[RMDB]
Chemical mapping of a 207-nucleotide RNA with DMS and 2A3.
The RNA was probed in 150 mM KOAc, 10 mM MgCl2 and 150 mM bicine (pH 8.5) at 24 C.
For DMS, 4,756 sequencing reads were counted.
It was measured as part of the RMDB library OK3TST.
RNA sequence: GGGAACGACUCGAGUAGAGUCGAAAAUGGGUGCAUAUAUAUUUAGGAUAGUUAGCUCUUCUUGUUGAAUUGAUCCCUUUACCAUUAUGUAAUGGCCUUCUUUGUCUCUUUCGAUCUUUGUUGGUUUAAAGUCUGUUUUAUCAGAGACUAGGAUUGAAGUACUGGAUACUUUCGAGUAUCCAGUACUAAAAGAAACAACAACAACAAC
Reactivity to DMS in 0.01 (KOAc 150mM, MgCl2 10mM, bicine 150mM(pH8.5), 24C), signal-to-noise 2, nucleotides 027 to 156: u000g020g000g030u000g000c010a080u000a080u000a110u000a090u000u000u000a070g010g030a080u000a050g020u000u000a030g010c040u000c030u010u010c050u010u010g040u000u030g000a130a140u010u000g020a070u010c000c020c020u030u010u010a060c000c030a060u010u000a100u000g010u000a040a090u000g010g010c070c050u000u000c020u000u000u010g010u000c020u000c030u000u000u000c050g010a070u010c020u000u000u000g010u000u000g020g020u000u000u010a060a060a060g000u000c040u020g010u000u000u000u010a110u010c080a080g000a100g000a070c040u010a060g010g010a100u000u000g010a170
Reactivity to 2A3 in 0.01 (KOAc 150mM, MgCl2 10mM, bicine 150mM(pH8.5), 24C), signal-to-noise 2, nucleotides 027 to 156: u110g010g010g020u060g040c070a030u070a000u030a000u030a040u240u220u110a080g020g010a050u030a050g090u080u040a020g010c010u000c020u110u060c020u070u080g040u040u040g060a090a020u020u070g080a120u090c010c010c000u000u080u030a090c030c030a040u040u060a060u250g110u120a040a090u060g060g000c010c020u050u040c010u000u020u040g020u010c020u000c000u030u060u070c030g050a050u010c040u070u060u050g030u020u040g050g080u080u140u080a040a050a020g040u010c010u010g090u040u060u040u140a100u120c020a000g010a000g000a080c000u030a030g010g060a030u000u060g020a040
Background:
DMS adducts were read by reverse transcription with MarathonRT.